[RMDB]
RNA sequence: GGGAACGACUCGAGUAGAGUCGAAAAUGAGUUUCAUUCGGAUUACUAUAUCCGUUUUAGACUUAGGACCGAAAUAGUGAAAGCCGAGGAGUCAAAACCUUUUUGAAGUUGCGCUUCUGGCGUAGAUGCUAUUAGGACACGUUCUACACUCGGAUCACCUCGUAUUUACUUUCGAGUAAAUACGAGGAAAAGAAACAACAACAACAAC
Reactivity to DMS in 0.01 (KOAc 150mM, MgCl2 10mM, bicine 150mM(pH8.5), 24C), signal-to-noise 1, nucleotides 027 to 156: u000g020a050g000u010u010u000c100a120u000u000c000g000g000a030u000u010a160c190u020a190u010a100u000c000c000g030u000u000u000u000a060g000a020c010u010u000a100g010g030a140c000c010g030a120a050a080u000a030g010u000g040a170a210a150g020c000c020g040a120g050g030a060g000u020c100a120a100a120a120c030c020u000u000u000u000u010g020a070a200g000u010u000g000c140g000c020u000u000c060u000g010g000c000g000u010a030g000a190u000g000c050u000a040u000u030a240g000g000a100c050a100c080g010u030u010c020u010a040c040a030c020u000c000g000g030a040u010c100a210
Reactivity to 2A3 in 0.01 (KOAc 150mM, MgCl2 10mM, bicine 150mM(pH8.5), 24C), signal-to-noise 3, nucleotides 027 to 156: u050g010a000g000u000u000u030c020a010u010u010c010g000g010a000u110u000a280c110u220a080u170a020u270c000c010g000u020u000u000u010a000g000a000c000u010u020a040g120g000a040c000c000g010a090a070a000u040a020g020u010g090a250a030a000g020c020c160g050a030g000g010a010g010u070c030a000a030a070a250c040c040u160u140u060u060u270g200a110a020g000u030u050g000c050g000c010u020u030c030u090g000g000c020g030u020a020g030a090u200g010c030u010a020u010u030a020g000g020a020c010a020c090g060u040u000c010u080a080c060a040c080u010c010g000g060a040u100c030a020